[RMDB]
RNA sequence: GGGAACGACUCGAGUAGAGUCGAAAAGUCUUGAAUUAGUACAGCAUUAUAACUCACAAGAACUUGCUGAAAAGCUGGUUUCACACGGUAGUGCAUCGACCAUCGACGCAUCCUGUGAAAAACCAGACAUGGAUGAUUUGUUCGCAAAUCAUCCAUGAAAAGAAACAACAACAACAAC
Reactivity to DMS in 0.01 (KOAc 150mM, MgCl2 10mM, bicine 150mM(pH8.5), 24C), signal-to-noise 3, nucleotides 027 to 126: g020u010c030u000u000g000a100a130u000u010a130g000u010a190c060a050g000c020a030u010u000a080u000a050a100c090u000c120a130c150a090a090g010a140a050c080u010u010g010c050u010g000a080a060a130a180g010c010u000g010g000u000u000u000c020a050c000a000c200g010g000u010a080g030u000g020c010a060u000c000g020a190c220c240a160u000c000g040a020c080g000c010a020u000c060c000u000g000u000g010a000a040a030a080a080c000c000a000g000a170
Reactivity to 2A3 in 0.01 (KOAc 150mM, MgCl2 10mM, bicine 150mM(pH8.5), 24C), signal-to-noise 3, nucleotides 027 to 126: g020u030c020u040u100g100a150a120u140u050a130g070u090a040c020a010g020c030a030u050u050a090u160a210a060c020u010c050a070c030a070a040g020a100a060c050u030u050g000c030u080g040a020a100a000a000g030c020u010g000g000u000u040u020c010a010c000a000c160g060g030u080a020g040u020g000c000a010u000c010g080a160c060c060a160u250c000g000a010c000g000c000a000u070c010c000u010g000u000g020a050a030a020a020a030c000c010a010g010a000

An RNA of 177 nucleotides, treated with DMS and 2A3 and read out base by base. Values cover nucleotides 27 to 126.